[RMDB]
RNA sequence: GGGAACGACUCGAGUAGAGUCGAAAAGAUAUGGAAGGUUGUAUACCACUAUGAAGUCGAUCGGAAACGAUCGAUGGAGUGGUACACCUUCCUAAGUCAAAGGGAUUCAAGUUCGCUUGAAUCCCAAGUUUGCUAUAGUGUUCGCACUAUAGCAAACAAAAGAAACAACAACAACAAC
Reactivity to DMS in 0.01 (KOAc 150mM, MgCl2 10mM, bicine 150mM(pH8.5), 24C), signal-to-noise 1, nucleotides 027 to 126: g010a020u000a210u020g000g000a030a010g000g000u000u010g030u000a140u010a090c010c000a000c000u000a300u020g000a130a250g010u010c000g010a010u000c010g000g000a070a040a120c000g010a000u000c000g020a000u010g010g000a010g020u000g010g010u000a060c230a000c000c000u000u000c000c000u000a000a050g010u000c010a080a140a200g000g010g010a010u000u000c000a000a010g010u010u010c300g030c010u000u000g000a010a000u000c000c010c000a000a000
Reactivity to 2A3 in 0.01 (KOAc 150mM, MgCl2 10mM, bicine 150mM(pH8.5), 24C), signal-to-noise 4, nucleotides 027 to 126: g010a000u020a000u060g010g020a010a010g050g010u100u060g090u210a210u170a200c040c030a010c000u300a300u300g010a000a010g010u010c010g000a010u000c000g010g000a020a000a010c000g000a000u010c010g000a000u010g010g000a000g010u000g000g000u020a030c010a000c000c000u000u000c000c000u000a000a010g010u010c030a050a100a190g020g000g000a000u000u010c000a000a000g040u030u140c240g080c250u000u010g000a000a000u000c000c000c010a000a010